[RMDB]
RNA sequence: GGGAACGACUCGAGUAGAGUCGAAAAGUGUGAUUGUUCGCAAUCACACAAAGAUGGAAAGCCAGCAUGAAGGCUAACCAUCAAAAUUGAUGCAAACAAAAAAAAGAUUUGGCUUCGGCCAAAUCAACAGAUUAGCACAGUUCGCUGUGCUAAUCUGAAAAGAAACAACAACAACAAC
Reactivity to DMS in 0.01 (KOAc 150mM, MgCl2 10mM, bicine 150mM(pH8.5), 24C), signal-to-noise 1, nucleotides 027 to 126: g020u000g020u000g040a000u000u000g010u000u000c170g030c000a000a020u000c000a010c000a020c000a040a130a070g040a040u010g010g000a040a300a030g000c060c000a080g030c250a180u040g000a100a110g020g000c000u020a020a300c010c000a040u030c020a090a030a150a040u000u000g000a070u040g010c130a170a110a040c020a030a040a030a020a040a090a170a120g000a010u010u000u000g000g010c000u010u010c160g050g040c000c000a000a000a000u000c010a070a050
Reactivity to 2A3 in 0.01 (KOAc 150mM, MgCl2 10mM, bicine 150mM(pH8.5), 24C), signal-to-noise 2, nucleotides 027 to 126: g000u010g000u010g000a010u000u000g020u010u050c060g000c110a000a000u010c000a000c000a010c000a000a020a000g010a000u000g000g020a040a060a010g000c000c010a020g150c150a210u240g140a200a050g000g000c000u000a010a010c000c010a000u030c020a000a030a000a050u110u090g070a030u170g040c090a030a130a080c090a030a090a110a060a030a000a010a110g000a000u030u020u000g000g000c000u030u080c280g110g000c020c000a000a000a000u000c000a000a000

Source: RMDB library M2PK50, as collected in RNAgym.
An RNA of 177 nucleotides, treated with DMS and 2A3 and read out base by base.
Values cover nucleotides 27 to 126.
DMS adducts were read by reverse transcription with MarathonRT.
For DMS, 715 sequencing reads were counted.
Conditions: 150 mM KOAc, 10 mM MgCl2 and 150 mM bicine (pH 8.5), 24 C.